RNA sequence: GGGAACGACUCGAGUAGAGUCGAAAAGAUAUGGAUUACGAACUACGACGAUUCUUAUCGAAGAACUCGGAAACGAGGGAGAUAAGGGUCGCGUAAUCCUAAGUCAAAAGCGAGCUUCGGCUCGCAACAAAAAUACUAUGUUCGCAUAGUAUUUUUGAAAAGAAACAACAACAACAAC
Reactivity to 2A3 in 0.01 (KOAc 150mM, MgCl2 10mM, bicine 150mM(pH8.5), 24C), signal-to-noise 5, nucleotides 027 to 126: g030a010u090a030u150g010g000a010u010u010a000c030g050a240a110c170u200a130c300g250a030c010g000a060u000u020c000u010u000a010u020c040g110a270a030g010a070a030c010u000c000g000g030a050a050a030c010g000a000g000g000g020a050g000a000u000a000a000g020g000g000u000c010g000c000g020u010a000a000u000c010c000u030a130a030g050u020c030a020a030a070a100g000c000g000a000g000c000u060u160c250g130g000c020u000c000g000c000a000a000
Reactivity to DMS in 0.01 (KOAc 150mM, MgCl2 10mM, bicine 150mM(pH8.5), 24C), signal-to-noise 6, nucleotides 027 to 126: g010a050u010a300u000g000g020a020u000u010a020c010g000a200a110c220u010a110c190g030a300c020g000a020u000u000c000u000u000a010u000c000g000a070a150g010a100a170c000u000c000g000g000a080a100a160c000g010a010g000g000g010a070g000a030u000a000a010g010g000g010u000c010g010c010g000u000a000a010u000c000c010u010a070a120g000u010c040a070a080a130a090g000c010g010a010g010c000u000u000c160g020g010c010u000c000g010c000a020a040